An RNA of 207 nucleotides, treated with 2A3 and read out base by base. It was measured as part of the RMDB library OK3TST.

[RMDB]
RNA sequence: GGGAACGACUCGAGUAGAGUCGAAAACUGGGGCAGAUUGCUCAGAGGUAGCUGUAGAGGCCUCUGAGAUAAUUGGUGCAGCAAGAUGGUAGUACUAGGUUUCCAGGAGGAAGGAAGGGACACUGGGCACUGAAGAAUAAGAGUACAAAAAGUAGGAACCAUUACGAGGUUUCGACCUCGUAAUGGUAAAAGAAACAACAACAACAAC
Reactivity to 2A3 in 0.01 (KOAc 150mM, MgCl2 10mM, bicine 150mM(pH8.5), 24C), signal-to-noise 2, nucleotides 027 to 156: c050u020g000g000g000g030c040a050g000a140u040u110g060c030u000c000a010g010a000g010g080u080a100g060c070u110g100u250a100g050a080g300g060c000c000u000c000u000g020a030g000a000u110a000a040u030u100g040g000u040g010c000a000g000c000a030a030g030a060u050g000g040u020a050g060u010a050c020u040a060g030g000u010u070u000c020c030a030g040g000a020g020g000a090a020g000g000a010a030g000g010g000a000c000a010c040u010g000g020g030c040a020c060u070g020a010a020g010a030a020u100a060a030g030a010g040u080a030c100a060a080a070a020a000g090u230a030g180g000a040